[RMDB]
RNA sequence: GGGAACGACUCGAGUAGAGUCGAAAAGUGAACGUGAUGGAGUAAUUGAACCCAGUCAAGACGCUCAGUUCAACAUUUUACUUCCUUUUUUACCUGGUUAUCAUCUCAACAGUGCUUAUGGUAAACUAUUUUCAUACUCCACUUUGCCUACUGUUCAAUAAAGUGAAUAUUUCGAUAUUCACUUUAUAAAAGAAACAACAACAACAAC
Reactivity to DMS in 0.01 (KOAc 150mM, MgCl2 10mM, bicine 150mM(pH8.5), 24C), signal-to-noise 3, nucleotides 027 to 156: g010u010g020a030a040c070g020u000g010a100u000g020g020a110g020u000a090a140u000u010g010a050a060c020c010c050a110g050u000c080a130a170g010a110c170g030c050u000c030a050g010u000u000c010a040a070c030a070u010u010u000u000a050c030u000u000c000c020u000u000u000u000u000u000a110c060c010u000g030g000u000u010a090u000c040a060u000c070u010c040a050a110c050a140g010u000g000c050u000u000a050u000g010g000u000a030a050a080c090u000a110u000u000u000u010c030a080u000a060c030u000c020c010a050c070u000u000u000g020c010c050u000a050c060u000g000u000u010c030a090
Reactivity to 2A3 in 0.01 (KOAc 150mM, MgCl2 10mM, bicine 150mM(pH8.5), 24C), signal-to-noise 8, nucleotides 027 to 156: g050u030g000a040a010c080g030u040g030a090u110g040g030a020g020u070a070a090u040u030g030a030a030c000c030c030a030g090u080c070a090a060g100a070c100g010c040u030c060a030g010u050u040c010a050a040c030a120u070u090u060u070a060c030u080u110c000c000u090u090u020u010u060u110a080c020c010u030g020g050u080u110a080u160c050a080u040c040u020c110a060a140c040a060g030u030g070c030u110u130a030u120g010g010u030a050a050a020c030u050a130u070u110u050u030c030a020u050a080c020u020c020c010a050c040u060u050u060g020c000c010u080a080c040u080g080u070u090c010a040